[RMDB]
Structure probing data (2A3 and DMS) for a 177-nucleotide construct. For DMS the reverse transcriptase was MarathonRT. Conditions: 150 mM KOAc, 10 mM MgCl2 and 150 mM bicine (pH 8.5), 24 C. For 2A3, 1,790 sequencing reads were counted. Reactivities are given for positions 27 through 126.
RNA sequence: GGGAACGACUCGAGUAGAGUCGAAAAUCUUCUCCGGCUUGCGUGCAUGCUGCCUUCCGCAAAGCUGCAGCGCGGCGCUCUGGAGGCCUUGCCCCGCGCACUGCUCUUUACAUGGCCCGACGUGAGGGACUUCGAUAAUGUUCGCAUUAUCGAAGUCAAAAGAAACAACAACAACAAC
Reactivity to 2A3 in 0.01 (KOAc 150mM, MgCl2 10mM, bicine 150mM(pH8.5), 24C), signal-to-noise 1, nucleotides 027 to 126: u030c010u070u030c020u000c000c000g050g010c100u080u160g000c010g020u050g070c050a080u070g020c030u020g040c030c000u070u050c100c050g050c090a070a070a020g040c050u020g000c040a010g030c030g040c000g070g000c010g010c010u030c030u040g030g050a030g000g000c000c030u030u050g030c000c000c030c000g000c010g000c010a030c030u030g020c000u050c000u100u080u060a110c040a100u150g030g020c030c000c000g050a090c060g060u100g030a090g040g080
Reactivity to DMS in 0.01 (KOAc 150mM, MgCl2 10mM, bicine 150mM(pH8.5), 24C), signal-to-noise 2, nucleotides 027 to 126: u000c120u000u000c020u010c030c020g000g000c090u000u010g030c010g030u000g000c000a060u000g000c050u010g010c080c060u000u000c120c090g000c140a050a060a080g000c100u010g000c050a040g030c050g020c000g000g000c070g020c050u030c040u010g010g000a110g020g010c070c050u010u010g000c020c050c020c040g000c080g000c030a090c060u000g000c010u000c040u000u000u000a120c090a130u000g030g010c010c020c010g010a060c080g010u010g010a100g000g020